[RMDB]
RNA sequence: GGGAACGACUCGAGUAGAGUCGAAAAUGAGAGCAGCAUGCCACAGAUGCUUGGAUUUUACUAUUGGAUUUUGCUGCCGGAAUAGGGCUUUCGGGACACUUAUUCCUUUGCUUAAGACCAACUCUGUCCUUUGUCAGCAUUUCGAUGCUGACAAAGGAAAAGAAACAACAACAACAAC
Reactivity to 2A3 in 0.01 (KOAc 150mM, MgCl2 10mM, bicine 150mM(pH8.5), 24C), signal-to-noise 2, nucleotides 027 to 126: u070g030a010g000a000g010c000a000g000c000a000u030g010c030c020a020c010a030g050a060u100g050c070u110u080g060g080a120u080u100u140u150a060c070u090a150u090u130g050g000a050u000u130u000u170g010c040u020g010c020c010g000g060a030a030u040a080g030g030g020c040u050u050u030c070g140g000g000a020c070a020c130u020u000a020u000u020c010c000u040u130u160g040c000u010u040a030a000g050a070c000c000a020a040c030u010c050u050g030u010

About this RNA: Chemical mapping of a 177-nucleotide RNA with 2A3. It was measured as part of the RMDB library RFM100.